Structure probing data (DMS and 2A3) for a 177-nucleotide construct. 2A3 adducts were read by reverse transcription with SuperScript II with manganese. The RNA was probed in 150 mM KOAc, 10 mM MgCl2 and 150 mM bicine (pH 8.5) at 24 C.

[RMDB]
RNA sequence: GGGAACGACUCGAGUAGAGUCGAAAAGAUAUGGAACGCUGUAUGGAGCUGCAGGUCGGAAACGACCUAUAGCUAUGAAGUAUUGGCGUUCCUAAGUCAAACUCUCGAGAGUUCGCUCUCGAGAGAAGGUACUUACUCUGUUCGCAGAGUAAGUACCAAAAGAAACAACAACAACAAC
Reactivity to DMS in 0.01 (KOAc 150mM, MgCl2 10mM, bicine 150mM(pH8.5), 24C), signal-to-noise 2, nucleotides 027 to 126: g000a060u000a270u000g000g000a030a000c000g030c000u000g030u000a000u010g020g010a030g000c010u000g010c100a010g010g030u000c010g020g000a080a050a150c010g030a020c000c000u000a020u000a000g030c000u000a200u010g000a140a300g000u000a010u000u030g010g010c000g020u010u000c010c000u000a020a050g000u000c020a120a150a210c010u000c000u000c000g010a010g020a000g010u000u010c250g010c010u000c000u000c000g000a020g000a000g000a020a010
Reactivity to 2A3 in 0.01 (KOAc 150mM, MgCl2 10mM, bicine 150mM(pH8.5), 24C), signal-to-noise 4, nucleotides 027 to 126: g000a010u060a010u120g000g000a000a010c000g010c010u010g040u110a030u060g120g200a060g010c000u000g020c030a010g000g000u020c000g030g000a070a040a030c000g000a010c000c000u000a000u000a010g000c000u080a300u300g190a130a030g050u050a020u150u300g040g000c000g000u010u020c000c000u000a040a000g000u000c040a020a050a250c000u000c000u000c010g010a000g000a000g020u180u140c300g040c090u010c000u000c010g000a000g000a000g010a010a010